Structure probing data (2A3 and DMS) for a 177-nucleotide construct. For 2A3 the reverse transcriptase was SuperScript II with manganese. For DMS, 52,301 sequencing reads were counted. Conditions: 150 mM KOAc, 10 mM MgCl2 and 150 mM bicine (pH 8.5), 24 C. DMS adducts were read by reverse transcription with MarathonRT. It was measured as part of the RMDB library OK1LIB.
[RMDB]
RNA sequence: GGGAACGACUCGAGUAGAGUCGAAAAACUAGUAUGUACAGGGGUGAGUUGACCUGUCGUCUAGACUGCUGACCAUCAACUCACCGGUCAGCUGGAUGAUGUCCACAGAGUACGACAUCAGUACUCAGUGUAUUGACGACUUCGGUUGUCGAUACACAAAAGAAACAACAACAACAAC
Reactivity to 2A3 in 0.01 (KOAc 150mM, MgCl2 10mM, bicine 150mM(pH8.5), 24C), signal-to-noise 9, nucleotides 027 to 126: a000c010u010a010g050u130a090u120g090u100a010c000a010g060g030g030g050u110g070a140g030u050u050g070a070c000c020u010g010u010c010g000u000c010u010a030g020a100c040u040g010c010u010g010a010c010c010a030u080c030a040a090c040u030c080a060c030c040g000g000u000c000a000g000c010u020g030g020a060u090g010a020u070g070u040c020c010a070c060a080g030a010g020u030a020c050g070a030c080a150u100c030a050g010u010a010c000u000c020a000
Reactivity to DMS in 0.01 (KOAc 150mM, MgCl2 10mM, bicine 150mM(pH8.5), 24C), signal-to-noise 9, nucleotides 027 to 126: a210c010u000a010g000u040a020u000g010u060a020c010a030g010g010g000g010u010g000a080g020u000u000g000a050c030c030u000g010u000c010g000u010c030u000a020g000a160c040u010g000c020u000g000a030c030c060a070u020c090a030a050c090u010c060a060c140c140g000g010u000c010a020g000c000u010g000g000a130u010g000a080u020g010u000c020c040a110c210a080g010a040g000u000a020c030g010a120c160a090u040c110a100g000u000a020c000u000c010a170